[RMDB]
RNA sequence: GGGAACGACUCGAGUAGAGUCGAAAACCAUGCCGACCCGAAGAGGAAAGAAGGACGCGAGACGCGAACCUGUGAGUGGAAACCCGCUUUAUUCACUGGGGACGACAACUCUGGGGAGAGAAGGGAGAAAGAUGUUCCUUCGGGAACAUCAAAAGAAACAACAACAACAAC
Reactivity to 2A3 in 0.01 (KOAc 150mM, MgCl2 10mM, bicine 150mM(pH8.5), 24C), signal-to-noise 9, nucleotides 027 to 129: c000c000a010u060g000c010c010g040a070c000c000c010g030a040a020g040a010g040g040a060a010a020g060a010a020g020g010a020c020g030c020g070a100g030a050c060g030c050g020a050a120c000c000u040g030u060g060a020g010u020g020g000a060a050a060c010c010c010g040c040u110u120u120a190u110u120c080a040c090u080g010g000g000g030a030c030g020a010c030a110a080c030u020c050u130g010g000g010g000a030g010a000g010a020a030g030g010g000a040g050a010a050a010
Reactivity to DMS in 0.01 (KOAc 150mM, MgCl2 10mM, bicine 150mM(pH8.5), 24C), signal-to-noise 7, nucleotides 027 to 129: c050c010a100u010g040c040c060g000a070c080c010c020g040a090a060g020a060g030g000a070a000a070g020a000a000g030g010a050c140g000c060g000a090g030a090c090g050c090g040a070a110c020c000u040g020u030g030a060g010u020g090g010a020a060a130c040c000c010g050c160u020u030u010a060u020u030c100a030c020u000g020g030g000g040a070c060g020a070c080a050a130c100u000c060u000g060g010g030g000a050g000a050g040a050a060g000g000g000a060g020a040a080a040